The record gives the reactivity of an RNA of 177 nucleotides to DMS and 2A3. It was measured as part of the RMDB library M2PK90.

[RMDB]
RNA sequence: GGGAACGACUCGAGUAGAGUCGAAAAAUAAAGAGCGUAAACGCGUCAUUGAGUGACGUGAUGAUCAUCCAAGUGUGCUGUCUACAGUCGUAGAUAGCGCACAUUACGCUAAGAUGAUCAUAAAAAAUACUGAUGAUUACUUCGGUAAUCAUCAGUAAAAAGAAACAACAACAACAAC
Reactivity to DMS in 0.01 (KOAc 150mM, MgCl2 10mM, bicine 150mM(pH8.5), 24C), signal-to-noise 4, nucleotides 027 to 126: a080u010a060a050a090g000a080g000c020g020u000a040a080a300c070g010c000g020u000c000a040u020u020g000a210g020u010g000a000c000g010u000g000a020u000g010a000u000c000a000u000c030c160a050a110g000u000g010u000g000c000u000g010u000c000u010a010c000a210g010u020c260g010u000a000g000a010u000a000g020c000g020c000a000c010a020u000u010a020c020g010c020u000a080a070g010a010u000g010a000u000c010a020u010a000a030a070a080a050a070
Reactivity to 2A3 in 0.01 (KOAc 150mM, MgCl2 10mM, bicine 150mM(pH8.5), 24C), signal-to-noise 5, nucleotides 027 to 126: a000u290a020a100a020g100a000g010c010g020u030a020a070a040c030g000c000g020u010c020a030u090u300g200a110g230u020g010a010c010g010u020g060a050u010g000a010u000c010a000u000c030c070a100a070g000u000g000u010g000c000u010g000u000c000u000a050c070a260g150u280c190g000u130a000g000a000u010a000g000c000g000c000a000c000a000u010u020a000c000g000c010u010a050a050g010a000u000g000a000u000c010a000u100a020a100a000a000a000a000

Annotation: Reactivities are given for positions 27 through 126.